An RNA of 207 nucleotides, treated with DMS and 2A3 and read out base by base. For 2A3, 3,452 sequencing reads were counted. The reactions ran in a buffer of 150 mM KOAc, 10 mM MgCl2 and 150 mM bicine (pH 8.5), at 24 C.
[RMDB]
RNA sequence: GGGAACGACUCGAGUAGAGUCGAAAACUACGAUGACAAAGAAUACAUGUCAGUAUCUCGUUUAAAAGCAUUUAUGCAAUGCGAAGCUAAACAGUAUGCCAUCGAAAAAGGCGAAUGGAUCGACGAACGAGACAACACCCCUUUGAUUUUUGGUAACUGUGUUUGUUUAUUUCGAUAAACAAACACAAAAAGAAACAACAACAACAAC
Reactivity to DMS in 0.01 (KOAc 150mM, MgCl2 10mM, bicine 150mM(pH8.5), 24C), signal-to-noise 3, nucleotides 027 to 156: c050u010a130c070g020a100u000g010a080c000a050a130a180g000a210a130u000a100c060a140u000g020u000c060a180g050u000a080u000c070u000c010g010u000u010u000a030a140a150a260g010c010a010u000u010u010a050u030g030c150a050a040u000g020c030g000a070a100g010c070u000a060a110a100c040a070g040u000a090u010g010c030c020a000u030c030g010a040a070a020a140a070g010g000c040g000a070a120u000g030g000a120u000c010g000a080c070g020a070a030c070g020a080g030a040c050a040a070c050a090c010c010c010c040u010u000u000g010a190u000u000u000u000u000g000g010u000a050a120c180
Reactivity to 2A3 in 0.01 (KOAc 150mM, MgCl2 10mM, bicine 150mM(pH8.5), 24C), signal-to-noise 6, nucleotides 027 to 156: c070u100a040c030g160a110u100g010a000c020a030a130a030g100a220a070u210a120c080a110u080g030u020c030a000g030u030a090u070c020u020c010g030u030u060u090a100a180a030a040g010c000a000u040u050u130a160u300g100c130a020a010u020g000c020g030a050a030g000c080u100a070a110a030c000a020g080u080a040u160g050c000c000a000u070c050g110a100a050a030a060a020g090g020c020g020a040a020u010g020g030a050u060c040g040a050c060g010a030a010c000g010a010g010a010c010a040a020c020a080c020c010c000c000u050u050u090g140a210u080u070u050u090u090g070g020u160a070a050c090